[RMDB]
RNA sequence: GGGAACGACUCGAGUAGAGUCGAAAAGUGACGAGUUGCAGACGGACCGUGAGAACGGUCACGGAGCAGCUUAUCGGCGUGCUCCGUCAACUUCGGGAAGAAAUGAGUUGCCCUUCGUACGCCGUGACUAGUGGUAAGUAUUCGUACUUGCUACUAGAAAAGAAACAACAACAACAAC
Reactivity to 2A3 in 0.01 (KOAc 150mM, MgCl2 10mM, bicine 150mM(pH8.5), 24C), signal-to-noise 1, nucleotides 027 to 126: g140u080g050a040c040g010a010g000u010u010g000c010a010g030a110c010g010g000a000c000c000g000u010g020a060g010a040a010c000g000g000u000c010a010c000g000g000a010g000c000a000g000c000u020u030a100u060c010g000g000c000g010u010g000c000u000c020c010g000u000c000a010a010c000u080u070c040g040g020g070a090a050g060a030a100a050u190g010a020g030u020u030g020c000c000c000u020u020c010g000u000a000c010g000c000c000g020u010g020a020
Reactivity to DMS in 0.01 (KOAc 150mM, MgCl2 10mM, bicine 150mM(pH8.5), 24C), signal-to-noise 9, nucleotides 027 to 126: g010u010g010a100c140g010a020g010u000u000g010c010a090g000a280c050g000g000a020c000c000g010u000g010a260g000a180a010c000g010g000u000c000a030c000g000g000a090g010c000a050g000c020u000u000a050u010c050g010g010c010g010u000g000c010u000c070c050g000u000c020a020a030c030u000u000c070g010g010g010a140a110g000a070a080a100u010g000a050g000u000u000g000c020c010c020u000u000c120g010u000a030c020g010c000c010g010u000g000a180
Chemical mapping of a 177-nucleotide RNA with 2A3 and DMS.
2A3 adducts were read by reverse transcription with SuperScript II with manganese.
The DMS profile rests on 144,398 reads.
It was measured as part of the RMDB library OK2TRN.
For 2A3, 85,031 sequencing reads were counted.
DMS adducts were read by reverse transcription with MarathonRT.